RNA sequence: GGGAACGACUCGAGUAGAGUCGAAAAAGGCUUGUUUUGCAACCCAUCGGCAGAUGUCAAAAUGCCAGUUAAAUAUAACUGCAAAAAAUACAAAUUCUUACGCAGUAGCUGCCUAAACACCAGCCUGUGUGACUAAUAGCAGAUUGCUUGUGUUUGCCUUUAGGUACUAGUUCGCUAGUACCUAAAGAAAAGAAACAACAACAACAAC
Reactivity to DMS in 0.01 (KOAc 150mM, MgCl2 10mM, bicine 150mM(pH8.5), 24C), signal-to-noise 1, nucleotides 027 to 156: a030g010g000c040u000u000g030u000u000u000u000g000c000a090a130c020c000c010a070u010c090g000g030c030a030g000a100u000g040u000c160a030a020a080a110u000g040c050c020a170g010u000u000a050a160a110u000a120u000a080a120c010u000g010c040a000a010a070a040a050a130u010a120c080a030a020a120u000u000c030u000u000a080c020g090c000a030g000u000a110g040c010u000g020c040c140u010a150a060a120c090a090c280c010a080g000c020c000u000g000u000g000u000g010a000c090u010a040a090u010a130g000c020a070g000a100u010u000g000c020u000u000g010u000g010u000u000u000g020c110
Reactivity to 2A3 in 0.01 (KOAc 150mM, MgCl2 10mM, bicine 150mM(pH8.5), 24C), signal-to-noise 4, nucleotides 027 to 156: a000g100g000c060u120u110g040u140u190u090u130g020c000a030a060c010c000c000a040u080c020g020g000c010a010g000a030u030g100u160c060a030a040a050a040u020g010c000c000a010g010u020u060a030a270a060u190a070u050a130a020c020u010g000c020a020a030a030a010a040a090u150a110c090a030a140a130u170u070c040u120u080a010c020g000c020a020g000u050a030g010c010u010g000c010c000u040a040a030a000c000a000c000c000a000g000c000c000u000g000u000g000u020g010a020c070u090a030a150u060a140g040c050a020g040a220u020u100g020c070u010u000g000u000g010u020u040u070g080c020